[RMDB]
RNA sequence: GGGAACGACUCGAGUAGAGUCGAAAAUGGUUGCCCUCCAAGUUUAGCAUGGGUAAGCAUAGCGUUAAACCAUUGGAUAACCUUCAAUACGUAUAAUAUGUUACCUGGGCAGAUAAAUGACCCAACAAUCAUUUAGCGGUUUCGACCGCUAAAUGAUAAAAGAAACAACAACAACAAC
Reactivity to 2A3 in 0.01 (KOAc 150mM, MgCl2 10mM, bicine 150mM(pH8.5), 24C), signal-to-noise 2, nucleotides 027 to 126: u100g060g000u040u060g030c000c000c010u000c040c000a120a050g040u090u190u120a040g070c060a080u120g000g050g020u020a130a000g070c000a010u010a000g020c010g030u040u090a110a120a020c010c030a070u030u000g010g000a030u040a090a070c010c000u030u040c030a050a020u030a030c030g030u010a040u020a210a090u050a030u090g070u040u010a020c000c020u040g030g000g000c000a000g020a100u140a100a170a060u110g080a080c030c010c010a010a030c030a040
Reactivity to DMS in 0.01 (KOAc 150mM, MgCl2 10mM, bicine 150mM(pH8.5), 24C), signal-to-noise 2, nucleotides 027 to 126: u010g000g020u000u030g000c030c020c010u000c050c070a160a190g020u010u000u010a100g020c050a030u000g010g000g000u000a030a080g040c040a010u000a010g000c070g000u000u010a120a070a080c140c190a060u010u000g030g000a020u010a140a100c220c140u030u000c020a020a090u000a030c040g000u010a070u020a040a140u000a020u000g010u010u000a020c010c010u000g000g000g000c000a080g000a100u010a040a070a080u000g010a100c030c000c060a030a130c180a070